[RMDB]
RNA sequence: GGGAACGACUCGAGUAGAGUCGAAAACCUCGGUGUUGUCACUUGUUAACUUCACCGUUGAUCCUCAAAAAGCUUAUCUCGAUUUCGUCAAUGCGGGAGGUGCCCCAUUGACAAAUUGUGUUAAGAUUACCCCAACUCUUCGGAGUUGGGAAAAGAAACAACAACAACAAC
Reactivity to DMS in 0.01 (KOAc 150mM, MgCl2 10mM, bicine 150mM(pH8.5), 24C), signal-to-noise 2, nucleotides 027 to 129: c060c000u000c000g000g050u000g030u000u080g030u000c110a060c180u070u060g060u070u050a120a050c020u000u000c030a030c000c020g020u000u050g040a000u040c030c000u090c210a080a050a140a120a070g030c040u020u010a010u040c030u020c000g070a010u010u010u020c170g000u000c010a000a000u020g000c190g000g000g000a290g110g000u140g050c000c010c030c010a030u070u000g020a010c010a020a010a000u030u010g030u000g030u060u010a040a000g000a060u000u000a150c220
Reactivity to 2A3 in 0.01 (KOAc 150mM, MgCl2 10mM, bicine 150mM(pH8.5), 24C), signal-to-noise 8, nucleotides 027 to 129: c010c000u000c010g000g000u020g010u000u030g050u050c060a060c230u130u150g090u160u170a040a010c010u010u000c000a000c010c010g000u000u040g010a040u030c000c030u120c080a070a100a050a030a020g010c010u020u020a010u040c040u010c030g010a000u000u010u050c060g000u000c000a010a000u010g020c200g040g020g020a220g180g120u290g140c000c000c000c000a000u000u000g000a000c000a000a000a000u000u020g020u000g000u000u000a010a010g010a050u030u170a130c010